An RNA of 207 nucleotides, treated with DMS and 2A3 and read out base by base. It was measured as part of the RMDB library OK3TST. Reactivities are given for positions 27 through 156. The reactions ran in a buffer of 150 mM KOAc, 10 mM MgCl2 and 150 mM bicine (pH 8.5), at 24 C. For DMS the reverse transcriptase was MarathonRT. In probing experiments dimethyl sulfate is read out at A N1 and C N3, which are open when not base-paired.
[RMDB]
RNA sequence: GGGAACGACUCGAGUAGAGUCGAAAAAGUGUUUUGAGGAGGCACGAUGCAUCAUGCCGCUAUCUCCACCAUAACGCCUAUAAUUACAGUGAACGACCUAACAUUCGCAAGCCAAGAAGAGAUCCAGGCCUGCGGUGGUGUACAGGGAAAAGGAGAACUAAUCACCUCAUUUCGAUGAGGUGAUUAGAAAAGAAACAACAACAACAAC
Reactivity to DMS in 0.01 (KOAc 150mM, MgCl2 10mM, bicine 150mM(pH8.5), 24C), signal-to-noise 3, nucleotides 027 to 156: a070g020u010g000u000u000u000u000g020a300g020g010a070g000g020c040a050c060g030a090u000g010c140a140u000c050a050u010g010c030c010g040c010u000a110u000c020u000c020c020a150c030c040a050u000a080a030c060g000c040c010u000a180u000a060a150u000u010a050c090a130g020u010g010a070a080c010g010a060c010c020u000a050a110c030a030u000u000c030g040c000a040a050g010c040c030a080a120g020a050a100g000a230g010a160u000c030c030a300g000g000c020c000u010g060c000g000g050u000g000g030u000g010u020a060c060a060g030g010g000a030a020a090a100g030g000a090g030a060a300
Reactivity to 2A3 in 0.01 (KOAc 150mM, MgCl2 10mM, bicine 150mM(pH8.5), 24C), signal-to-noise 5, nucleotides 027 to 156: a010g130u090g040u050u050u070u050g080a050g010g030a030g010g010c030a020c090g060a050u150g040c040a110u050c040a040u180g020c000c000g000c040u030a090u050c030u000c010c010a060c020c000a030u070a110a020c030g030c040c010u110a070u080a260a140u140u080a070c060a020g060u010g200a120a020c060g050a120c020c030u070a070a040c010a040u150u230c020g000c020a020a020g000c010c020a120a070g060a120a010g020a110g010a070u110c110c020a030g000g030c010c000u010g000c020g040g010u030g020g020u030g010u010a080c100a050g010g000g070a020a080a020a040g050g010a060g010a050a020